[RMDB]
RNA sequence: GGGAACGACUCGAGUAGAGUCGAAAACAAGUUGGCUUCGGCCAACUUGAAAAGAAUGGUAGACUGAGACCGCUAAACUCAGAUAACCAAUAAUAGCGGAAAAAAGAUCAGUGUUCGCACUGAUCAAGAUAGACGUAUUGUUCGCAAUACGUCUAUCAAAAGAAACAACAACAACAAC
Reactivity to 2A3 in 0.01 (KOAc 150mM, MgCl2 10mM, bicine 150mM(pH8.5), 24C), signal-to-noise 6, nucleotides 027 to 126: c000a000a000g000u010u000g000g010c010u040u110c300g040g000c020c020a000a000c000u000u000g000a010a010a000a010g120a040a080u160g090g060u110a040g030a130c010u010g000a010g020a060c010c030g000c050u050a140a130a040c000u010c010a000g020a080u120a040a040c020c040a010a010u170a150a040u020a030g020c020g040g000a060a030a000a020a010a020g000a000u000c000a000g010u000g060u060u090c180g020c060a000c000u000g010a000u000c000a000a000
Reactivity to DMS in 0.01 (KOAc 150mM, MgCl2 10mM, bicine 150mM(pH8.5), 24C), signal-to-noise 5, nucleotides 027 to 126: c010a000a020g010u010u000g000g010c020u000u010c250g040g000c000c000a010a000c000u010u000g010a070a090a080a120g000a100a110u000g010g010u010a090g010a160c010u000g000a020g000a120c020c020g020c010u000a030a070a060c000u000c010a000g010a130u010a080a160c030c030a050a050u000a060a070u000a040g000c010g000g010a010a080a050a070a090a060g000a010u000c000a000g010u000g000u000u020c200g010c000a010c010u010g000a010u000c000a040a040
Chemical mapping of a 177-nucleotide RNA with 2A3 and DMS.
The 2A3 profile rests on 13,250 reads.
2A3 adducts were read by reverse transcription with SuperScript II with manganese.
Values cover nucleotides 27 to 126.
Source: RMDB library M2PK50, as collected in RNAgym.
The reactions ran in a buffer of 150 mM KOAc, 10 mM MgCl2 and 150 mM bicine (pH 8.5), at 24 C.